An RNA of 177 nucleotides, treated with 2A3 and DMS and read out base by base. The data come from the RNA Mapping Database (RMDB), library OK1LIB.
RNA sequence: GGGAACGACUCGAGUAGAGUCGAAAAUUGAUUUAUCGCAAUGGGCUUUAAAGUGUGUAUAAAUCAAACGAAUUGUACAAUACAUGCGAGUAUGGUAUUUUAAAUGAAGUGACACACGGAACGGAUGACUAGCAGGCAUAUUCGUAUGCCUGCUAGUAAAAGAAACAACAACAACAAC
Reactivity to 2A3 in 0.01 (KOAc 150mM, MgCl2 10mM, bicine 150mM(pH8.5), 24C), signal-to-noise 4, nucleotides 027 to 126: u050u010g010a010u030u020u030a030u030c010g020c040a050a140u160g060g260g010c050u050u170u240a210a240a120g030u020g000u000g020u020a020u010a060a010a020u020c000a000a040a000c100g050a070a030u120u090g020u030a000c020a020a010u030a000c020a010u090g140c010g030a040g050u110a000u100g120g000u020a110u020u190u050u160a110a200a150u090g050a040a010g080u060g090a000c010a030c020a000c030g020g030a110a030c010g070g110a050u080g000
Reactivity to DMS in 0.01 (KOAc 150mM, MgCl2 10mM, bicine 150mM(pH8.5), 24C), signal-to-noise 3, nucleotides 027 to 126: u010u030g000a030u000u000u000a000u000c050g010c020a050a110u030g010g040g020c110u000u040u010a110a110a100g030u010g020u000g010u050a030u010a000a020a010u010c000a030a050a100c090g000a070a080u020u000g020u000a040c060a030a050u010a020c030a110u030g030c160g000a090g000u010a030u010g000g020u000a010u010u020u040u010a020a100a130u010g000a100a070g000u010g000a060c100a040c040a050c050g010g000a080a050c030g000g010a100u060g000